Chemical mapping of a 177-nucleotide RNA with 2A3 and DMS. High DMS reactivity at an A or C suggests that its Watson-Crick edge is free. It was measured as part of the RMDB library OK1LIB.
[RMDB]
RNA sequence: GGGAACGACUCGAGUAGAGUCGAAAAGAAUUUCUUCUGGGCAAGAUGAAAGGCAUUCUUCACCCGAUCCUUAUGGUAUCAAUGAUAAGUUUUUCGAUCUCGAAAAGUUCAAUAGGGAUACUUUAGCCGAUAUACUAAUCUUCGGAUUAGUAUAUCGAAAAGAAACAACAACAACAAC
Reactivity to 2A3 in 0.01 (KOAc 150mM, MgCl2 10mM, bicine 150mM(pH8.5), 24C), signal-to-noise 9, nucleotides 027 to 126: g010a020a040u040u040u000c010u030u020c020u080g060g070g110c120a070a040g040a120u090g060a130a040a050g080g010c030a050u040u010c000u030u040c030a090c000c000c020g020a030u030c000c010u090u070a050u100g080g010u090a040u140c060a100a060u110g060a050u060a130a080g030u010u000u000u040u030c060g030a140u060c090u030c120g020a020a030a010a030g030u060u040c030a050a030u050a100g040g000g010a020u040a110c000u060u060u060a040g030c040
Reactivity to DMS in 0.01 (KOAc 150mM, MgCl2 10mM, bicine 150mM(pH8.5), 24C), signal-to-noise 8, nucleotides 027 to 126: g000a060a050u010u000u000c000u000u000c030u000g010g020g020c190a110a070g010a080u000g000a050a060a060g000g010c110a040u010u000c020u000u000c120a120c000c010c010g010a040u020c030c030u020u010a030u000g000g010u010a030u010c060a070a100u020g010a060u010a080a100g010u010u000u000u010u010c010g010a180u040c250u030c020g010a010a010a030a040g000u000u010c070a070a060u010a050g010g000g000a030u010a040c050u000u000u020a080g030c190